[RMDB]
RNA sequence: GGGAACGACUCGAGUAGAGUCGAAAAACGGCCGAUGACCACGCCGUCACAGCCGGUGGUGGACAUCAUGGCCAGUGCGUCGCCGGCAUCGUAGAUGUCGCCGUUGCCGAGCACCGGAAUCGUCCGGCACGUACGGGUUGUUCGCAACCCGUACGUGAAAAGAAACAACAACAACAAC
Reactivity to DMS in 0.01 (KOAc 150mM, MgCl2 10mM, bicine 150mM(pH8.5), 24C), signal-to-noise 2, nucleotides 027 to 126: a100c150g000g000c000c000g010a020u020g000a050c000c010a020c000g020c000c000g060u030c140a220c290a130g010c290c020g030g050u000g060g040u010g000g020a210c000a020u000c010a030u020g020g030c000c000a060g010u010g030c110g010u000c000g010c300c010g030g000c010a020u000c000g040u000a080g030a020u000g010u000c020g150c080c010g000u000u020g020c000c040g010a230g030c080a190c000c010g000g020a040a140u000c130g000u000c000c020g020g020
Reactivity to 2A3 in 0.01 (KOAc 150mM, MgCl2 10mM, bicine 150mM(pH8.5), 24C), signal-to-noise 1, nucleotides 027 to 126: a000c050g010g000c000c000g000a000u020g010a030c000c010a000c000g040c080c000g000u020c060a300c090a250g060c070c000g100g000u060g230g050u020g000g010a060c000a000u030c020a090u180g010g000c000c000a030g020u100g000c000g050u020c000g000c040c000g000g030c000a030u020c050g140u080a150g010a160u100g030u080c020g000c000c020g020u000u120g000c000c000g050a060g070c040a010c000c040g030g100a040a120u180c030g050u010c070c000g000g020
Chemical mapping of a 177-nucleotide RNA with DMS and 2A3.
For 2A3 the reverse transcriptase was SuperScript II with manganese.
The RNA was probed in 150 mM KOAc, 10 mM MgCl2 and 150 mM bicine (pH 8.5) at 24 C.
For DMS the reverse transcriptase was MarathonRT.